[RMDB]
RNA sequence: GGGAACGACUCGAGUAGAGUCGAAAAGCAUGGUCCCAGCCUCCUCGCUGGCGCCGGCUGGGCAACAUUCCGAGGGGACCGUCCCCCUCGGUAAUGGCGAAUGGGACCCAGAUCUCUCUCUAGCUUCAAGGCGUACUGUUCGCAGUACGCAAAAGAAACAACAACAACAAC
Reactivity to 2A3 in 0.01 (KOAc 150mM, MgCl2 10mM, bicine 150mM(pH8.5), 24C), signal-to-noise 9, nucleotides 027 to 129: g050c030a080u140g010g010u070c000c000c000a000g020c010c010u070c020c010u070c070g020c040u030g030g020c030g020c020c000g020g000c010u030g020g040g010c030a030a030c010a030u030u020c000c000g000a000g000g010g000g040a090c030c080g180u250c000c000c000c000c000u000c000g000g000u010a020a010u020g010g010c050g060a080a070u080g020g020g030a040c020c000c000a060g040a140u020c030u000c000u000c000u000c020u060a040g030c000u080u060c060a080a020g070
Reactivity to DMS in 0.01 (KOAc 150mM, MgCl2 10mM, bicine 150mM(pH8.5), 24C), signal-to-noise 7, nucleotides 027 to 129: g030c080a130u000g000g000u000c140c000c010a070g000c050c050u000c030c010u030c180g000c020u020g030g000c200g040c020c020g030g030c040u030g010g040g020c010a110a100c040a040u010u010c020c010g000a000g000g000g000g000a090c130c200g000u080c060c000c010c010c000u000c030g020g010u060a020a000u020g010g010c070g010a110a040u030g000g000g000a110c060c030c040a030g000a120u000c030u020c010u040c030u030c080u050a040g020c010u000u060c090a120a100g040